[RMDB]
RNA sequence: GGGAACGACUCGAGUAGAGUCGAAAACACUAAGAUCACGCAAGGCGCCUCCUCAUCGUCACAGAAUCAACUCUUCAUGUAUGUCCUCCCGGUGGUGUUCCUCUUUAUCCUGUACAAUGCGCCCGCGACUUCGGGUGUAUUUCGAUACACCCGAAGUAAAAGAAACAACAACAACAAC
Reactivity to 2A3 in 0.01 (KOAc 150mM, MgCl2 10mM, bicine 150mM(pH8.5), 24C), signal-to-noise 1, nucleotides 027 to 126: c030a000c000u070a100a070g040a060u080c040a060c070g020c040a000a080g040g000c030g010c000c040u000c050c050u070c000a060u030c030g090u060c030a060c000a090g040a060a050u060c020a020a120c010u040c050u110u040c030a050u130g080u190a070u150g070u090c000c010u000c010c010c050g000g000u030g040g010u050g010u070u070c040c000u020c010u000u090u070a110u070c020c010u030g010u020a050c020a050a140u060g020c020g040c000c000c020g000c000g040
Reactivity to DMS in 0.01 (KOAc 150mM, MgCl2 10mM, bicine 150mM(pH8.5), 24C), signal-to-noise 3, nucleotides 027 to 126: c030a080c090u000a090a090g010a080u000c060a070c120g010c100a110a110g020g000c070g010c050c030u010c020c010u000c020a060u010c060g020u020c050a070c090a070g020a070a100u010c090a040a060c060u000c030u000u000c040a050u010g020u010a030u000g000u000c020c050u010c010c010c010g030g030u000g010g010u000g010u000u000c020c010u010c030u010u000u010a080u010c040c010u000g010u010a050c090a050a060u000g030c080g000c030c010c050g020c110g020